[RMDB]
RNA sequence: GGGAACGACUCGAGUAGAGUCGAAAAUUGUUUAUAUUCAAAGCAGGCUGAAAGUUGUUUCAACUGUGAUGGCUAAAAGAUUGGAGGACAAAUAAACAUUUAUGUUGUCCAGAUUUCUUUGGAAAACCAUGAGUAGCGGAUUCGUCCGCUACUCAUGAAAAGAAACAACAACAACAAC
Reactivity to 2A3 in 0.01 (KOAc 150mM, MgCl2 10mM, bicine 150mM(pH8.5), 24C), signal-to-noise 2, nucleotides 027 to 126: u040u010g010u000u190u000a170u080a150u030u230c060a130a000a030g020c020a000g040g070c100u140g030a130a060a060g050u050u060g060u090u000u000c000a000a000c040u010g080u110g110a020u000g060g000c010u020a020a020a020a010g050a060u000u210g100g140a060g000g000a000c000a000a030a030u170a020a080a000c060a110u000u110u240a180u100g270u000u040g010u060c000c000a000g000a040u000u020u000c000u000u010u000g120g000a170a150a000a060c020
Reactivity to DMS in 0.01 (KOAc 150mM, MgCl2 10mM, bicine 150mM(pH8.5), 24C), signal-to-noise 1, nucleotides 027 to 126: u070u000g020u000u000u020a140u040a090u000u010c090a020a060a300g000c020a040g000g000c050u000g010a140a070a120g000u000u050g040u000u000u000c010a010a040c110u000g000u040g000a190u020g000g020c060u000a000a020a010a000g000a030u000u000g000g000a300g000g020a000c000a020a050a070u000a000a060a190c290a120u000u010u040a010u010g000u000u000g000u000c010c020a010g000a270u000u000u000c020u000u030u000g040g000a140a100a050a040c130